[RMDB]
RNA sequence: GGGAACGACUCGAGUAGAGUCGAAAAGAGAAAAGCAAAGAAAGCAACGGGGCUAGCGAGUGGAUGUUCCGCCCCCCGAGAGGGGACGAGUGAGGCUUAUCCCGGAGCAUUCGGCGAAUCGUCCCCAGCAUAUUAUUCGGUUCGCCGAAUAAUAUGCAAAAGAAACAACAACAACAAC
Reactivity to DMS in 0.01 (KOAc 150mM, MgCl2 10mM, bicine 150mM(pH8.5), 24C), signal-to-noise 3, nucleotides 027 to 126: g000a210g000a060a090a070a080g030c060a070a070a090g010a090a090a130g010c030a060a110c040g000g010g010g000c090u000a100g000c030g010a100g020u000g020g010a090u000g000u000u000c020c020g000c020c030c000c000c010c020g000a130g000a150g010g020g000g010a020c020g000a050g000u020g020a060g010g000c020u000u000a090u000c010c000c000g010g000a050g000c010a070u000u000c010g000g020c090g000a060a060u000c020g000u000c010c000c000c040a120
Reactivity to 2A3 in 0.01 (KOAc 150mM, MgCl2 10mM, bicine 150mM(pH8.5), 24C), signal-to-noise 2, nucleotides 027 to 126: g140a010g030a000a180a010a050g030c080a110a060a190g070a090a160a000g080c010a000a080c040g000g040g030g020c030u090a000g020c030g080a030g060u130g090g130a140u140g050u140u040c000c000g070c010c010c000c010c000c000g030a050g040a060g130g000g000g010a000c000g000a000g020u130g010a030g040g030c000u010u030a030u060c000c000c000g030g010a000g000c020a080u080u060c040g060g000c040g100a020a060u010c010g000u000c000c000c010c000a010